[RMDB]
The record gives the reactivity of an RNA of 177 nucleotides to 2A3 and DMS.
DMS adducts were read by reverse transcription with MarathonRT.
RNA sequence: GGGAACGACUCGAGUAGAGUCGAAAAGCUGGUUCAGGAUGAAACCUUAUCUGAGUGGACAUCUAUGGAUGAUAAAUGCGGAUAUGGGACUGAGACCUGCUAAAAGUUUCUAGCUUCGGCUAGAAACGACCCUAGUAAUCUUCGGAUUACUAGGGUCAAAAGAAACAACAACAACAAC
Reactivity to 2A3 in 0.01 (KOAc 150mM, MgCl2 10mM, bicine 150mM(pH8.5), 24C), signal-to-noise 3, nucleotides 027 to 126: g010c000u010g000g010u010u020c010a020g050g020a160u150g200a120a110a110c010c000u010u010a000u000c010u000g020a010g030u050g030g010a010c010a000u000c010u070a180u300g260g000a010u010g010a010u080a250a050a010u060g010c010g000g010a000u010a020u040g030g010g010a010c000u000g000a010g080a100c000c000u000g000c000u010a030a050a010a110g000u010u010u010c000u000a010g000c000u010u030c210g110g000c000u000a020g000a000a000a000c000
Reactivity to DMS in 0.01 (KOAc 150mM, MgCl2 10mM, bicine 150mM(pH8.5), 24C), signal-to-noise 3, nucleotides 027 to 126: g010c020u000g000g000u000u010c010a030g040g000a180u010g000a110a120a230c010c000u000u000a000u000c010u000g000a220g010u000g000g010a300c020a000u010c010u000a220u020g040g000a020u000g000a010u020a190a120a040u010g000c030g020g000a030u000a010u000g000g010g000a120c010u000g000a080g000a040c010c010u000g000c010u000a050a110a110a160g010u000u000u000c000u000a000g010c000u000u030c280g030g010c000u000a000g000a000a000a010c010